Structure probing data (DMS and 2A3) for a 177-nucleotide construct. The 2A3 profile rests on 5,962 reads. It was measured as part of the RMDB library OK1LIB. The DMS profile rests on 4,239 reads. In probing experiments dimethyl sulfate is read out at A N1 and C N3, which are open when not base-paired. 2A3 adducts were read by reverse transcription with SuperScript II with manganese. The reactions ran in a buffer of 150 mM KOAc, 10 mM MgCl2 and 150 mM bicine (pH 8.5), at 24 C.
[RMDB]
RNA sequence: GGGAACGACUCGAGUAGAGUCGAAAAAUGUGCUGAACAUCAGAGCAGAUCUAGGAGAUGGUAGACUAAUCACAAUGCUGAGUUACAAGUCCUCAGGACAAGAUGCUGAUUCAGAACAGGGCAACCAACUUGUGUGAGAGUUCGCUCUCACACAAGUAAAAGAAACAACAACAACAAC
Reactivity to DMS in 0.01 (KOAc 150mM, MgCl2 10mM, bicine 150mM(pH8.5), 24C), signal-to-noise 3, nucleotides 027 to 126: a080u030g030u020g010c020u000g000a040a060c180a070u010c050a020g000a090g020c040a020g040a050u010c030u020a070g000g000a090g010a050u020g000g000u030a040g020a050c060u000a130a080u000c050a030c120a080a110u020g060c060u000g000a050g000u010u000a060c130a090a090g000u010c040c000u000c130a110g000g000a020c080a040a080g000a050u020g010c040u000g000a040u010u000c030a060g000a040a040c050a110g000g000g010c070a080a080c040c030a070
Reactivity to 2A3 in 0.01 (KOAc 150mM, MgCl2 10mM, bicine 150mM(pH8.5), 24C), signal-to-noise 6, nucleotides 027 to 126: a000u100g030u020g000c040u020g040a060a020c040a080u050c020a030g020a000g060c050a000g050a080u010c020u120a040g060g060a110g030a080u070g090g010u060a030g060a060c010u070a060a040u090c050a040c060a110a090u110g030c050u000g030a020g020u060u090a040c040a120a050g040u060c000c020u080c040a050g000g050a040c010a060a040g040a080u070g020c030u010g010a060u040u030c010a000g010a050a030c010a030g080g020g000c020a040a010c010c010a020